[RMDB]
RNA sequence: GGGAACGACUCGAGUAGAGUCGAAAAAAAGUAAAUGCGAAUAACAUCGUUAAAUUUGCUCGUAAGGACGCUCUAGUAGCUGCCUAAAUAGCCUCUUUCAGGUUCGAGCGUCUUCGGUUUGACUCCGUUAAGGACUGAAGACCAACCCCCAACGGAUUAGAAAGAUGAAGUUCGCUUCAUCUUUCUAAAAAGAAACAACAACAACAAC
Reactivity to DMS in 0.01 (KOAc 150mM, MgCl2 10mM, bicine 150mM(pH8.5), 24C), signal-to-noise 1, nucleotides 027 to 156: a000a040a190g030u030a080a030a000u000g020c020g040a290a120u000a100a110c130a040u010c010g010u010u000a050a080a120u000u030u000g040c000u000c000g010u030a180a130g010g000a020c010g010c010u000c010u050a180g030u010a020g000c030u000g000c030c010u000a140a150a140u000a140g020c000c060u000c050u000u000u000c000a030g040g000u000u010c010g000a030g040c040g020u000c000u000u000c010g010g000u020u010u000g010a170c070u000c020c060g030u000u010a100a300g000g030a050c020u000g010a020a020g020a060c040c050a030a110c010c010c000c040c040a030a070c090g020g000a160u000
Reactivity to 2A3 in 0.01 (KOAc 150mM, MgCl2 10mM, bicine 150mM(pH8.5), 24C), signal-to-noise 4, nucleotides 027 to 156: a000a000a000g060u070a050a040a040u110g010c010g020a010a040u090a130a040c030a080u020c030g000u050u060a080a170a130u130u110u040g000c000u010c000g030u030a040a020g000g010a010c020g030c010u010c060u090a150g060u150a000g070c020u070g080c010c010u060a120a160a120u110a030g000c010c000u110c030u070u250u230c180a030g020g010u040u050c000g000a000g000c010g000u000c000u000u000c000g020g000u010u010u140g010a000c000u010c010c000g020u010u020a010a000g000g000a000c000u020g000a010a020g010a010c000c030a020a090c020c010c000c000c000a000a010c000g000g000a000u000

Structure probing data (DMS and 2A3) for a 207-nucleotide construct. The data come from the RNA Mapping Database (RMDB), library ARCHII. The reactions ran in a buffer of 150 mM KOAc, 10 mM MgCl2 and 150 mM bicine (pH 8.5), at 24 C. For DMS the reverse transcriptase was MarathonRT. Reactivities are rounded to 0.1 and cut off at 0 and 3. Reactivities are given for positions 27 through 156.